[RMDB]
RNA sequence: GGGAACGACUCGAGUAGAGUCGAAAACAUUUAUGAAUUUCAUAGUAAUAGAAAUACAUGUCCUACCGAGACAGAAUUUGGAACUUGCUACCCUCUUGCCUAGCAGGCAAAGAUUUACCUCCGUGGAUGCCUGUAGAAUCUUCGGAUUCUACAGGCAAAAAGAAACAACAACAACAAC
Reactivity to 2A3 in 0.01 (KOAc 150mM, MgCl2 10mM, bicine 150mM(pH8.5), 24C), signal-to-noise 2, nucleotides 027 to 126: c030a010u070u240u130a090u110g050a080a040u110u130u040c040a080u020a110g100u190a210a100u090a300g040a060a060a000u110a020c030a090u080g000u000c000c000u000a020c000c070g080a060g020a040c060a020g200a240a100u190u150u190g110g080a070a090c040u050u060g030c000u030a060c000c000c010u010c040u060u000g000c000c000u030a090g070c190a030g030g000c000a000a140a080g080a050u000u030u070a030c010c020u020c000c040g070u050g000g000a020
Reactivity to DMS in 0.01 (KOAc 150mM, MgCl2 10mM, bicine 150mM(pH8.5), 24C), signal-to-noise 1, nucleotides 027 to 126: c080a070u050u000u000a070u040g000a090a060u000u020u030c020a030u000a080g010u000a150a140u030a120g000a030a020a010u000a130c010a070u000g000u000c000c040u000a050c000c130g000a110g000a080c030a060g000a110a050u000u000u020g010g030a040a070c050u000u000g000c000u010a100c020c020c010u000c000u000u000g000c000c030u000a080g000c040a150g000g000c000a090a010a090g050a120u010u010u000a080c040c010u000c030c120g000u000g000g000a300
About this RNA: Chemical mapping of a 177-nucleotide RNA with 2A3 and DMS. The 2A3 profile rests on 562 reads. Source: RMDB library OK1LIB, as collected in RNAgym. The DMS profile rests on 1,283 reads. For DMS the reverse transcriptase was MarathonRT.